[RMDB]
RNA sequence: GGGAACGACUCGAGUAGAGUCGAAAACAUGGAUGUACGGCGCACCCAUGGAGUCGCGCUCGGUCGUGCGAGAAAUGACUACUUUGAUGUUAACGAUCCGGCCCAUCUUCGGCCUCCACUUUAGCGACCCUAGAGCUAGGUUCGCCUAGCUCUAGGGAAAAGAAACAACAACAACAAC
Reactivity to 2A3 in 0.01 (KOAc 150mM, MgCl2 10mM, bicine 150mM(pH8.5), 24C), signal-to-noise 3, nucleotides 027 to 126: c010a020u030g000g010a010u030g020u140a060c130g090g060c060g000c020a020c030c010c000a010u010g010g010a020g030u020c030g000c020g000c040u010c010g010g000u010c000g000u030g060c080g040a120g060a040a090a060u190g040a050c030u060a040c080u240u150u210g080a100u130g050u070u080a060a030c030g050a040u020c040c000g030g000c000c030c010a090u080c080u120u090c020g030g020c010c030u000c020c020a090c060u100u080u080a060g030c050g020a070
Reactivity to DMS in 0.01 (KOAc 150mM, MgCl2 10mM, bicine 150mM(pH8.5), 24C), signal-to-noise 2, nucleotides 027 to 126: c020a020u020g010g020a050u010g020u010a080c070g030g010c090g040c010a040c030c000c010a010u000g000g000a070g000u010c050g000c100g010c000u000c030g000g000u000c070g030u000g010c040g000a090g000a060a120a090u000g000a050c070u000a170c100u000u000u010g010a110u030g000u000u010a070a100c060g000a120u000c030c020g000g020c040c010c050a080u010c120u000u010c130g000g000c060c000u010c020c030a070c140u000u000u000a060g000c110g010a260
Source: RMDB library OK2TST, as collected in RNAgym. Chemical mapping of a 177-nucleotide RNA with 2A3 and DMS. DMS adducts were read by reverse transcription with MarathonRT. Reactivities are rounded to 0.1 and cut off at 0 and 3. Values cover nucleotides 27 to 126.